[RMDB]
RNA sequence: GGGAACGACUCGAGUAGAGUCGAAAAUACAUAGUGGAAACACCAGGGCCACAUUACUUAGGUAUCAAGAUGAACGACGAGGAACUAGCUUAUUAAAUUGGCAAAACAUAGACACCAAGAAAUAGAACGAUAGUAAAUCGUUCGCGAUUUACUAUCGAAAAGAAACAACAACAACAAC
Reactivity to DMS in 0.01 (KOAc 150mM, MgCl2 10mM, bicine 150mM(pH8.5), 24C), signal-to-noise 4, nucleotides 027 to 126: u010a090c100a090u010a060g020u010g010g010a080a110a090c050a040c040c070a040g010g010g000c020c030a030c060a060u010u000a010c070u000u010a060g030g010u010a030u000c080a050a090g010a060u000g010a060a080c100g000a090c070g010a080g010g010a050a060c070u000a060g020c040u000u010a060u000u010a030a060a110u010u000g010g000c050a050a040a060a060c100a060u000a050g010a050c120a040c010c020a020a030g010a050a060a060u010a080g000a050a170
Reactivity to 2A3 in 0.01 (KOAc 150mM, MgCl2 10mM, bicine 150mM(pH8.5), 24C), signal-to-noise 4, nucleotides 027 to 126: u130a000c070a030u160a050g030u040g030g040a020a090a030c030a020c020c020a020g040g000g000c020c010a020c010a050u040u070a030c040u050u070a040g000g050u030a050u080c020a060a050g020a120u080g020a050a030c050g060a000c030g020a050g040g010a030a020c010u010a040g050c020u080u040a040u090u130a140a120a100u060u020g020g010c000a010a010a080a080c010a020u070a020g060a010c010a000c040c010a010a020g060a030a150a020u090a050g090a070a010
About this RNA: Structure probing data (DMS and 2A3) for a 177-nucleotide construct. For 2A3, 4,352 sequencing reads were counted. For DMS the reverse transcriptase was MarathonRT. It was measured as part of the RMDB library M2PK90. High DMS reactivity at an A or C suggests that its Watson-Crick edge is free. The DMS profile rests on 3,774 reads. Values cover nucleotides 27 to 126.